[RMDB]
RNA sequence: GGGAACGACUCGAGUAGAGUCGAAAAGGCGCUGCUAUUAGCCGGGAUUCAUAGGCUGGCGAUGAUUGAGAUUGUUCCCACACGCAAUUUCUCCUGAUCCACAUGAAGGCUAAACUUCCUUGGACGUUUUAUGCGUCUCUUUCGAGAGACGCAUAAAAAAAGAAACAACAACAACAAC
Reactivity to 2A3 in 0.01 (KOAc 150mM, MgCl2 10mM, bicine 150mM(pH8.5), 24C), signal-to-noise 5, nucleotides 027 to 126: g030g000c040g000c030u030g000c010u030a040u060u170a090g010c010c000g020g010g060a180u200u190c090a040u170a090g150g060c020u020g010g000c040g000a100u150g010a050u090u090g020a010g060a100u030u050g030u000u020c000c000c000a010c000a000c010g040c010a050a110u020u040u020c030u060c000c030u060g050a170u000c010c010a050c020a070u120g030a040a000g040g020c050u140a100a120a070c010u050u010c010c000u030u030g010g020a010c050g000u010
Reactivity to DMS in 0.01 (KOAc 150mM, MgCl2 10mM, bicine 150mM(pH8.5), 24C), signal-to-noise 2, nucleotides 027 to 126: g020g000c010g050c000u000g000c030u000a040u050u000a060g000c000c030g000g000g050a150u030u000c140a180u010a150g000g030c000u000g000g000c060g050a080u000g000a090u000u040g000a010g010a080u000u000g020u000u000c000c010c000a160c240a060c170g000c100a120a020u030u040u000c030u000c060c020u000g040a060u010c010c000a080c090a050u010g010a060a060g000g000c190u020a040a230a090c090u000u000c000c010u040u000g000g000a030c080g000u000